The record gives the reactivity of an RNA of 177 nucleotides to DMS and 2A3. For 2A3 the reverse transcriptase was SuperScript II with manganese. For 2A3, 1,630 sequencing reads were counted. The DMS profile rests on 2,501 reads. It was measured as part of the RMDB library OK2TST. Values cover nucleotides 27 to 126. DMS adducts were read by reverse transcription with MarathonRT.

[RMDB]
RNA sequence: GGGAACGACUCGAGUAGAGUCGAAAAAGAUGCUUUGAGCGACGAAGGUGUUGCUCGUGUAAUUGAUGAGCUUUCUCAAGAAUUUGAUUACAUUAUUUGUGACUCACCUGCGGGGAUCGAGCGUGGACAUCGUAUGCCGAUUCGUCGGCAUACGAUGAAAAGAAACAACAACAACAAC
Reactivity to DMS in 0.01 (KOAc 150mM, MgCl2 10mM, bicine 150mM(pH8.5), 24C), signal-to-noise 3, nucleotides 027 to 126: a140g020a120u010g000c040u010u000u000g010a010g020c020g020a060c000g000a120a080g000g030u000g030u010u000g030c060u010c050g000u010g040u000a020a030u000u010g010a020u000g010a150g020c140u000u000u010c160u000c120a090a070g010a080a100u000u000u000g000a020u020u010a020c010a060u000u010a130u010u010u010g010u010g020a100c040u000c030a070c030c010u000g020c050g000g000g010g010a080u000c050g000a020g010c030g020u000g010g010a190
Reactivity to 2A3 in 0.01 (KOAc 150mM, MgCl2 10mM, bicine 150mM(pH8.5), 24C), signal-to-noise 2, nucleotides 027 to 126: a000g080a020u110g000c010u140u210u270g010a000g010c010g070a030c020g120a140a080g100g020u130g010u180u040g010c010u010c060g000u000g000u010a030a060u020u040g050a050u020g010a100g100c010u030u090u090c070u050c070a030a010g100a050a050u090u030u050g010a000u060u000a010c030a030u130u030a080u030u250u130g130u100g030a060c000u000c040a030c010c010u050g020c060g040g020g000g070a040u040c010g020a010g000c020g020u060g090g030a030